[RMDB]
RNA sequence: GGGAACGACUCGAGUAGAGUCGAAAAAGCGAGCCGAAGCCGAGGGCACGCUUCGUCGUGGGUCAGCAGCUGAGCUACGCGCUGCGCUCGAUGAGACCACUGCCGGAUUACGCGCUCGGCCGAAGCGGUCGCUGUGCGAUUUCGAUCGCACAGCGACAAAAGAAACAACAACAACAAC
Reactivity to 2A3 in 0.01 (KOAc 150mM, MgCl2 10mM, bicine 150mM(pH8.5), 24C), signal-to-noise 1, nucleotides 027 to 126: a000g030c020g020a040g010c000c010g020a060a020g000c010c010g010a020g030g130g000c000a010c090g060c000u040u000c010g000u000c030g010u040g020g000g070u100c030a050g000c000a000g000c030u090g030a000g050c040u110a080c220g070c010g000c030u040g000c000g010c030u030c060g070a130u150g020a020g050a100c060c000a020c040u120g080c040c010g080g030a030u040u130a030c080g000c020g090c000u000c000g030g000c030c000g040a050a000g010c010g060
Reactivity to DMS in 0.01 (KOAc 150mM, MgCl2 10mM, bicine 150mM(pH8.5), 24C), signal-to-noise 1, nucleotides 027 to 126: a060g030c070g010a100g020c040c000g000a240a050g010c040c010g020a090g000g000g020c010a060c150g020c270u000u000c000g010u010c100g000u010g010g010g000u010c070a070g020c170a020g010c000u000g020a110g030c070u000a160c140g000c030g010c030u000g000c160g060c000u000c040g000a070u000g000a070g000a070c010c030a010c020u000g050c060c000g000g000a030u000u000a200c120g050c030g000c050u000c020g000g010c010c030g000a280a080g000c000g000